[RMDB]
RNA sequence: GGGAACGACUCGAGUAGAGUCGAAAAUGAAAGAGCGUCGCAAACACAGAGACUAAGUCUCACACUGACUGACGCUAAACCGCUCUGUCAGUGUGGGAGAUAUCGGUAUUAAUGUGAGCGGAAAAAACAUUCAGGGUUCGUUCGCGAACCCUGAAUGAAAAGAAACAACAACAACAAC
Reactivity to 2A3 in 0.01 (KOAc 150mM, MgCl2 10mM, bicine 150mM(pH8.5), 24C), signal-to-noise 1, nucleotides 027 to 126: u140g040a030a040a050g060a000g000c040g020u010c000g000c040a020a040a010c040a000c030a060g180a000g040a170c040u160a220a010g110u000c000u000c010a000c000a010c000u000g000a000c010u020g010a000c030g000c010u000a020a040a050c030c010g000c020u010c020u010g000u000c000a000g010u000g000u000g000g060g000a000g020a000u080a010u010c020g000g020u050a030u080u110a200a140u040g030u010g010a020g010c050g020g000a060a130a000a000a000a000
Reactivity to DMS in 0.01 (KOAc 150mM, MgCl2 10mM, bicine 150mM(pH8.5), 24C), signal-to-noise 2, nucleotides 027 to 126: u010g010a070a060a090g020a140g050c030g030u000c010g010c010a000a100a090c130a040c070a060g000a110g000a100c130u000a100a120g020u000c000u000c000a000c000a000c010u000g000a010c010u000g000a040c050g040c000u000a010a080a110c050c030g000c050u000c000u010g010u000c000a010g000u000g000u000g000g010g000a020g000a060u000a020u000c050g010g030u000a040u000u000a080a090u000g000u000g010a070g000c020g020g000a000a050a060a070a100a050